[RMDB]
RNA sequence: GGGAACGACUCGAGUAGAGUCGAAAAUAGGAUCGGUACACUAGAGUACACACAUGACUAGCGAUCGUAGCACAGCCAUGGAUCUCUGAUCCAUACAUCGCUCAUGCGACAUGUCCAUGUAGCGGUACUGCUAUCCGUAGUUCGCUACGGAUAGCAGAAAAGAAACAACAACAACAAC
Reactivity to DMS in 0.01 (KOAc 150mM, MgCl2 10mM, bicine 150mM(pH8.5), 24C), signal-to-noise 3, nucleotides 027 to 126: u000a110g010g010a010u000c030g010g000u000a020c050a200c170u000a140g040a170g010u000a030c050a110c100a090c040a040u000g000a070c100u000a090g000c010g010a080u010c150g040u010a060g000c080a080c120a080g020c070c080a030u010g000g000a040u020c060u030c150u000g000a000u000c000c030a110u000a050c160a050u020c010g000c000u000c040a030u000g010c070g000a060c130a150u000g010u010c030c010a050u000g010u010a000g050c020g000g000u090a100
Reactivity to 2A3 in 0.01 (KOAc 150mM, MgCl2 10mM, bicine 150mM(pH8.5), 24C), signal-to-noise 3, nucleotides 027 to 126: u160a010g070g020a030u060c030g000g030u040a030c100a020c080u090a020g030a030g250u150a020c080a020c020a000c030a080u100g060a140c040u030a030g020c000g050a040u130c080g080u120a020g070c060a000c030a120g050c040c010a030u030g050g020a050u030c290u010c090u210g010a020u010c000c000a000u040a030c090a020u020c020g000c020u020c020a020u000g010c040g070a040c060a130u170g050u080c040c000a000u030g090u090a010g000c000g000g020u050a070